[RMDB]
RNA sequence: GGGAACGACUCGAGUAGAGUCGAAAAAUAUGCCGCUUGGAAUCAUGAUGCUGUGGGCGGCAUAGCGUAAUAGCCGACCAUCACGGGGAUCUUGUCAGGUCGGCAGGUAUAGCCAGCACGGGCCGAAAACGAAAAGGUGGUUCGCCACCUUUUCGUUAAAAGAAACAACAACAACAAC
Reactivity to DMS in 0.01 (KOAc 150mM, MgCl2 10mM, bicine 150mM(pH8.5), 24C), signal-to-noise 2, nucleotides 027 to 126: a070u010a000u020g000c020c000g010c020u030u060g010g000a080a110u030c140a120u020g010a050u000g030c070u010g020u000g000g030g000c010g000g000c020a000u000a020g000c160g010u020a100a060u020a080g010c000c010g000a000c000c000a070u040c080a100c060g000g000g000g000a050u020c030u010u020g030u000c200a140g000g020u010c050g000g010c000a000g010g000u020a190u030a080g000c020c020a010g030c050a100c090g010g010g000c010c060g000a070a070
Reactivity to 2A3 in 0.01 (KOAc 150mM, MgCl2 10mM, bicine 150mM(pH8.5), 24C), signal-to-noise 2, nucleotides 027 to 126: a000u060a010u000g000c000c000g000c000u010u010g010g100a080a140u110c030a030u180g110a060u120g200c150u070g020u100g000g000g000c000g000g000c000a000u000a000g010c090g000u020a060a090u040a220g000c000c000g000a000c000c010a050u120c000a010c020g030g000g030g060a020u040c000u010u270g020u150c040a020g000g050u000c000g090g000c020a000g000g000u050a040u080a020g070c000c000a000g010c000a050c060g030g000g090c020c010g050a250a020